An RNA of 207 nucleotides, treated with 2A3 and read out base by base. Values cover nucleotides 27 to 156. The data come from the RNA Mapping Database (RMDB), library OK3TST. The reactions ran in a buffer of 150 mM KOAc, 10 mM MgCl2 and 150 mM bicine (pH 8.5), at 24 C.
RNA sequence: GGGAACGACUCGAGUAGAGUCGAAAACUGUUAACAAUGCUGCGAAACUCUCCAAUGAGCCAUCUGCCACGUUUUUUGGCUUAUUCAAAGUUGCGUGAUGGCCCCUAAAUUUAAGACUCGGCCAUGUUGGGCAGCAACAGCUUUGAUCAAUGAACUCAGUAGCUGUUGUUUUCGAACAACAGCUACUAAAAGAAACAACAACAACAAC
Reactivity to 2A3 in 0.01 (KOAc 150mM, MgCl2 10mM, bicine 150mM(pH8.5), 24C), signal-to-noise 2, nucleotides 027 to 156: c050u000g020u140u050a110a000c090a030a050u050g000c000u020g010c070g110a110a060a060c000u030c010u060c100c060a040a130u110g010a020g010c000c000a020u060c030u120g050c020c110a140c150g020u020u000u070u000u080u030g000g010c000u060u070a110u090u040c070a020a020a020g000u010u080g040c040g030u150g080a020u000g030g000c020c010c030c010u160a200a190a160u180u180u100a090a040g000a070c050u040c150g010g040c000c010a010u040g100u050u050g070g000g000c000a000g020c000a030a000c000a000g000c000u140u030u070g020a040u090c080a160a200u230g040a060a040c050u050c180